Chemical mapping of a 207-nucleotide RNA with 2A3. It was measured as part of the RMDB library M2RFPK. 2A3 adducts were read by reverse transcription with SuperScript II with manganese. The RNA was probed in 150 mM KOAc, 10 mM MgCl2 and 150 mM bicine (pH 8.5) at 24 C. For 2A3, 1,021 sequencing reads were counted.
[RMDB]
RNA sequence: GGGAACGACUCGAGUAGAGUCGAAAAUCUAGGGUUCCGCAUGUCAAUUGACAUGGACUGGUCCGAGAGAAAACACAUACGCCUAAAUAGAAGCGCGUAUGCACACGGAGGGAAAAAAGCCCGGGAGAAUGGGAUUAUUAGUUCGCUAAUAAUCCAAGUGAUUCACAUAGUUCGCUAUGUGAAUCACAAAAGAAACAACAACAACAAC
Reactivity to 2A3 in 0.01 (KOAc 150mM, MgCl2 10mM, bicine 150mM(pH8.5), 24C), signal-to-noise 2, nucleotides 027 to 156: u010c000u030a020g010g000g000u010u000c010c000g000c000a000u000g000u020c090a190a300u250u300g000a000c000a000u000g000g050a110c000u060g000g000u010c020c010g000a000g010a000g010a000a030a000a000c030a000c000a000u000a000c010g010c010c010u130a210a260a160u290a160g130a240a030g040c030g000c000g080u010a000u000g010c010a020c000a000c040g020g020a020g030g000g000a000a300a000a080a000a050g020c000c000c000g030g100g010a010g020a020a080u190g080g000g000a000u000u000a000u010u000a010g010u030u090c210g000c100u000a000a000u000a000a000u000c010c000a010a010